[RMDB]
RNA sequence: GGGAACGACUCGAGUAGAGUCGAAAAGACACAGAGUGAGUCACACUGUGAGAGACUGUGUGUGUCAGUGUGACACACUGUCUGAGAGUCAGUGUCAGAGAGUCUGUCUCUCUCUCACUGUGAGUCAGUGAGAUGUAACCUUCGGGUUACAUCUCACAAAAGAAACAACAACAACAAC
Reactivity to DMS in 0.01 (KOAc 150mM, MgCl2 10mM, bicine 150mM(pH8.5), 24C), signal-to-noise 4, nucleotides 027 to 126: g000a040c020a160c040a040g000a030g020u000g000a030g000u010c110a060c020a020c010u000g000u010g000a220g000a070g010a040c030u000g010u000g020u010g010u000g000u010c020a130g010u010g000u020g020a010c000a030c000a010c000u000g000u000c000u000g000a150g010a230g000u000c010a020g010u000g000u020c150a020g000a010g000a020g010u010c300u020g000u000c010u000c000u000c000u010c010u010c000a000c000u000g010u000g000a080g000u000c020a100
Reactivity to 2A3 in 0.01 (KOAc 150mM, MgCl2 10mM, bicine 150mM(pH8.5), 24C), signal-to-noise 4, nucleotides 027 to 126: g020a000c010a000c030a030g080a000g060u030g010a020g050u070c020a000c000a000c020u000g030u060g100a150g020a010g010a120c080u070g020u050g030u020g010u020g080u300c010a040g100u060g060u110g190a000c000a000c000a000c010u030g020u040c010u030g070a110g000a010g230u100c010a000g000u010g000u050c030a000g010a000g000a010g040u050c130u300g170u150c010u040c000u000c000u010c010u000c010a010c010u050g050u020g100a030g050u040c020a010